[RMDB]
This 177-nucleotide RNA was probed chemically with DMS. For DMS, 1,190 sequencing reads were counted.

RNA sequence: GGGAACGACUCGAGUAGAGUCGAAAAUAUAUAUAGAUCGUUCUAUUAACGAACACGCGCGGGUCGUCGGUGGUCGGCGAGCCCACGGACGAACUAACUCGCGCGAACGAGUAAAAAUCGCCAGGAAUCCUGGCGAUACGUUCGCGUAUCGCCAGGAAAAAGAAACAACAACAACAAC
Reactivity to DMS in 0.01 (KOAc 150mM, MgCl2 10mM, bicine 150mM(pH8.5), 24C), signal-to-noise 2, nucleotides 027 to 126: u000a100u000a180u000a130u000a040g010a120u000c010g010u000u000c020u000a160u000u020a110a160c140g010a050a100c090a100c030g000c000g020c000g030g000g010u000c000g030u000c000g010g020u010g010g010u000c010g020g010c010g000a060g000c220c000c000a000c010g000g000a000c000g000a090a050c120u010a100a120c020u000c020g000c000g010c010g010a000a010c030g000a070g010u000a000a050a030a010a050u000c030g020c000c010a160g000g000a140a120

DMS adducts were read by reverse transcription with MarathonRT.